[RMDB]
An RNA of 177 nucleotides, treated with DMS and 2A3 and read out base by base.
RNA sequence: GGGAACGACUCGAGUAGAGUCGAAAAGCAAGUGUAAAAGCAAUCGCUGACGCUGGUAUUCAGCCUGAAGAUAUAGAUAUGAUAAUUGUUGCCACAGCAACUGGAGAUAUGCCAUUUCCAACUGUCGCAGUGUUACACCGUUCGCGGUGUAACACUGAAAAGAAACAACAACAACAAC
Reactivity to DMS in 0.01 (KOAc 150mM, MgCl2 10mM, bicine 150mM(pH8.5), 24C), signal-to-noise 2, nucleotides 027 to 126: g000c050a050a110g010u000g010u000a020a110a120a080g010c030a090a120u000c120g010c000u000g000a130c150g010c050u000g040g010u000a060u000u000c060a050g000c020c030u000g020a070a040g000a140u000a150u000a080g010a100u010a020u000g020a070u000a030a150u000u000g000u000u020g020c020c080a070c060a050g010c080a060a030c070u000g000g020a050g000a050u000a010u000g010c120c130a100u010u000u000c010c000a030a060c030u000g000u000c290g020
Reactivity to 2A3 in 0.01 (KOAc 150mM, MgCl2 10mM, bicine 150mM(pH8.5), 24C), signal-to-noise 1, nucleotides 027 to 126: g000c030a100a000g040u070g010u140a100a060a000a000g020c020a000a180u030c070g050c020u050g070a070c040g030c050u020g070g000u090a110u100u100c020a000g030c000c010u130g070a110a000g040a050u060a020u080a210g030a050u110a060u170g050a030u060a100a070u110u100g060u060u050g060c010c000a000c020a030g000c000a010a050c000u030g090g000a040g000a030u090a090u100g130c040c040a000u030u010u000c070c090a130a130c190u000g000u110c000g000
The reactions ran in a buffer of 150 mM KOAc, 10 mM MgCl2 and 150 mM bicine (pH 8.5), at 24 C. The 2A3 profile rests on 722 reads.